[RMDB]
RNA sequence: GGGAACGACUCGAGUAGAGUCGAAAAGUUAGGCGAGGCUCCUAUACAAACACAGGUUGCUGAUCUGACGACGCCGAGAGACGCCCAAGAUUAGGACAGGAUAUAUCGAACCAAGGUAUAUCCCCAUAAAACUCGGAACACUUCGGUGUUCCGAGAAGAGGCUUAAGAAGUUCGCUUCUUAAGCCUCAAAAGAAACAACAACAACAAC
Reactivity to 2A3 in 0.01 (KOAc 150mM, MgCl2 10mM, bicine 150mM(pH8.5), 24C), signal-to-noise 1, nucleotides 027 to 156: g030u030u020a010g010g080c110g050a170g000g030c040u040c000c000u070a030u120a180c120a040a150a000c200a020c060a050g000g000u130u090g040c000u070g050a110u100c030u000g000a030c010g000a000c020g000c000c000g020a010g000a000g000a030c030g010c000c000c000a090a030g110a110u250u200a000g000g060a030c080a020g010g000a000u000a000u000a000u020c000g020a060a130c030c070a100a050g000g000u000a000u000a000u030c000c000c020c000a010u120a020a080a000a020c020u000c020g000g000a000a000c000a000c020u040u060c160g020g000u000g000u000u000c000c000g000a000g000a000a010
Reactivity to DMS in 0.01 (KOAc 150mM, MgCl2 10mM, bicine 150mM(pH8.5), 24C), signal-to-noise 1, nucleotides 027 to 156: g080u010u000a050g010g060c060g000a220g040g000c050u000c000c020u010a110u010a170c090a100a110a140c040a020c120a080g020g000u000u000g000c010u000g080a080u000c000u000g000a250c040g020a010c000g000c010c010g020a300g000a300g030a040c010g030c010c000c070a200a100g000a030u000u000a140g000g010a140c040a000g080g000a060u000a020u000a030u000c000g000a020a300c160c090a150a120g000g030u000a010u000a030u000c000c000c050c010a090u000a030a100a060a210c010u000c000g020g000a030a010c010a020c000u000u020c260g040g040u000g010u000u010c000c000g000a000g000a000a070

An RNA of 207 nucleotides, treated with 2A3 and DMS and read out base by base. 2A3 adducts were read by reverse transcription with SuperScript II with manganese. Reactivities are given for positions 27 through 156. Source: RMDB library M2RFPK, as collected in RNAgym. The 2A3 profile rests on 524 reads.